[RMDB]
RNA sequence: GGGAACGACUCGAGUAGAGUCGAAAACUGCUCUUAUACCGAUGAGGUCCAGAGGACUACUUGUUGCGGAACCAGCCAUCAAAUAUAAGAAGGACCUAACUACAAUCUAAAGAUUUCAGGUGAUCAGUGAACAUACGUGUUUCGACACGUAUGUUCAAAAAGAAACAACAACAACAAC
Reactivity to DMS in 0.01 (KOAc 150mM, MgCl2 10mM, bicine 150mM(pH8.5), 24C), signal-to-noise 2, nucleotides 027 to 126: c060u000g010c040u010c020u000u000a060u000a090c040c280g000a030u010g000a150g000g000u000c050c080a100g020a160g010g010a040c050u020a070c120u000u000g010u000u000g000c070g010g000a060a070c070c030a060g000c050c030a020u000c040a020a120a100u010a060u000a100a060g010a060a080g000g000a040c030c030u020a030a060c090u030a100c200a060a050u020c060u010a040a100a120g000a050u000u000u020c060a070g000g010u020g000a050u020c110a060g010
Reactivity to 2A3 in 0.01 (KOAc 150mM, MgCl2 10mM, bicine 150mM(pH8.5), 24C), signal-to-noise 2, nucleotides 027 to 126: c020u020g000c030u010c000u020u080a090u060a150c060c020g130a160u020g060a070g000g020u020c020c000a120g070a210g160g040a040c030u090a050c030u090u270g110u060u100g050c080g050g000a040a120c020c010a030g030c000c000a020u070c000a000a120a070u160a030u030a060a000g070a040a030g060g000a020c000c000u020a050a090c020u090a060c060a100a020u020c030u180a230a160a000g040a090u050u070u150c060a000g070g020u040g110a130u100c010a060g090